[RMDB]
RNA sequence: GGGAACGACUCGAGUAGAGUCGAAAAUCUUCUCUCUUCACCCCGUCGAGUGUGACGAGGAGUGUUCUGAAGUAGAGGCUUCAGAUUUAGAAGAAGGUGAAUCAGAGUGCAUUUCUGAGACUUCAACCCUUGGGGUAUUGUUCGCAAUACCCCAAGGAAAAGAAACAACAACAACAAC
Reactivity to 2A3 in 0.01 (KOAc 150mM, MgCl2 10mM, bicine 150mM(pH8.5), 24C), signal-to-noise 1, nucleotides 027 to 126: u020c000u030u000c020u030c010u000c030u080u070c000a000c000c000c000c020g020u030c010g030a140g290u300g070u160g060a010c030g010a170g050g000a170g040u040g000u070u000c000u000g000a000a000g000u060a140g020a080g270g080c000u000u010c000a000g000a000u030u030u130a010g010a010a000g020a010a020g010g030u040g030a020a030u030c000a010g020a020g020u120g230c080a080u060u130u040c010u000g020a000g020a090c010u050u070c080a050a110c000
Reactivity to DMS in 0.01 (KOAc 150mM, MgCl2 10mM, bicine 150mM(pH8.5), 24C), signal-to-noise 1, nucleotides 027 to 126: u000c020u000u000c000u000c120u000c020u000u000c080a140c000c000c000c040g020u010c020g000a200g030u010g030u030g020a020c010g010a060g040g000a170g030u000g010u010u000c020u000g000a010a010g010u000a140g020a170g030g010c000u000u000c030a020g010a010u010u000u020a010g020a050a030g000a010a020g020g020u000g000a090a140u000c040a010g000a040g010u010g030c200a140u020u000u010c010u000g010a070g000a180c110u010u000c090a090a170c170
The record gives the reactivity of an RNA of 177 nucleotides to 2A3 and DMS. 2A3 adducts were read by reverse transcription with SuperScript II with manganese. The reactions ran in a buffer of 150 mM KOAc, 10 mM MgCl2 and 150 mM bicine (pH 8.5), at 24 C. 2A3 is a SHAPE reagent: it acylates the 2'-hydroxyl of flexible nucleotides of all four kinds. For 2A3, 890 sequencing reads were counted. DMS adducts were read by reverse transcription with MarathonRT.